Source information
Chemical mapping of a 177-nucleotide RNA with DMS and 2A3. 2A3 is a SHAPE reagent: it acylates the 2'-hydroxyl of flexible nucleotides of all four kinds. The data come from the RNA Mapping Database (RMDB), library RFM100. For DMS the reverse transcriptase was MarathonRT. The RNA was probed in 150 mM KOAc, 10 mM MgCl2 and 150 mM bicine (pH 8.5) at 24 C.
RNA sequence: GGGAACGACUCGAGUAGAGUCGAAAAUACUGGAUGCUGUUGUGCAGGUACAGCUCUCCAGUGGAUAUGAGGGGCUAGAGCAAUCCUGUGAUAUAUGCAUGGGGGCUGUUUCUCCUCAGCAGCUGCCAAUAGAUCCUGCGUUCGCGCAGGAUCUAUUAAAAGAAACAACAACAACAAC
Reactivity to DMS in 0.01 (KOAc 150mM, MgCl2 10mM, bicine 150mM(pH8.5), 24C), signal-to-noise 1, nucleotides 027 to 126: u030a130c010u000g020g010a150u020g000c000u010g000u020u030g020u030g020c200a010g000g000u010a040c010a020g010c000u020c100u000c010c010a020g010u000g050g000a040u010a030u000g000a060g000g000g000g000c100u000a080g000a220g010c020a030a080u080c010c000u040g050u080g010a080u020a050u000a020u040g040c040a040u000g000g010g000g000g020c000u000g060u000u000u000c000u000c110c000u010c000a050g000c070a090g000c030u000g010c080c070
Reactivity to 2A3 in 0.01 (KOAc 150mM, MgCl2 10mM, bicine 150mM(pH8.5), 24C), signal-to-noise 2, nucleotides 027 to 126: u230a010c040u050g020g000a020u070g020c000u020g040u050u020g010u040g080c040a000g020g020u050a000c000a000g000c000u000c030u030c010c000a010g030u030g030g060a080u080a040u060g010a050g000g000g000g000c040u080a070g040a060g100c040a030a040u110c010c010u040g020u050g070a010u040a040u040a010u220g120c000a010u010g020g020g000g010g000c000u010g070u000u050u030c000u020c000c000u000c010a010g000c010a000g010c000u060g060c000c000